This 177-nucleotide RNA was probed chemically with DMS and 2A3.
It was measured as part of the RMDB library TTRDEL.
[RMDB]
RNA sequence: GGGAACGACUCGAGUAGAGUCGAAAAGAUAUGGAGAUGCUCGAUAAGUCGCAUUCGGAAACGAAUGGCGACUUUUGACGAGCUACUCCUAAGUCAAAACCGAAUCAAUGUUCGCAUUGAUUCGGAACGAAGAACUAUGGUUCGCCAUAGUUCUUCGAAAAGAAACAACAACAACAAC
Reactivity to DMS in 0.01 (KOAc 150mM, MgCl2 10mM, bicine 150mM(pH8.5), 24C), signal-to-noise 5, nucleotides 027 to 126: g010a030u000a300u020g000g010a010g020a300u000g000c000u000c000g000a170u000a020a030g010u000c000g010c000a030u000u010c000g000g020a070a070a180c000g010a010a000u000g010g030c000g010a000c000u000u000u000u010g020a170c120g000a010g020c010u000a230c010u000c000c010u000a020a120g000u000c030a080a080a140a190c000c000g010a000a000u000c010a010a010u000g010u000u000c270g010c010a010u000u000g010a020u000u000c000g020g000a010a020
Reactivity to 2A3 in 0.01 (KOAc 150mM, MgCl2 10mM, bicine 150mM(pH8.5), 24C), signal-to-noise 3, nucleotides 027 to 126: g010a010u050a030u090g010g000a010g010a010u060g000c000u000c010g100a130u050a300a020g000u020c000g000c020a000u000u020c000g020g010a090a040a020c010g020a010a030u050g240g000c020g000a010c000u010u010u010u020g020a010c020g000a000g000c000u020a090c000u000c000c000u000a120a010g040u030c020a020a020a100a200c000c000g000a010a000u010c000a000a000u030g050u070u130c300g030c150a000u000u000g010a000u020u000c000g000g000a020a010
Values cover nucleotides 27 to 126. The reactions ran in a buffer of 150 mM KOAc, 10 mM MgCl2 and 150 mM bicine (pH 8.5), at 24 C.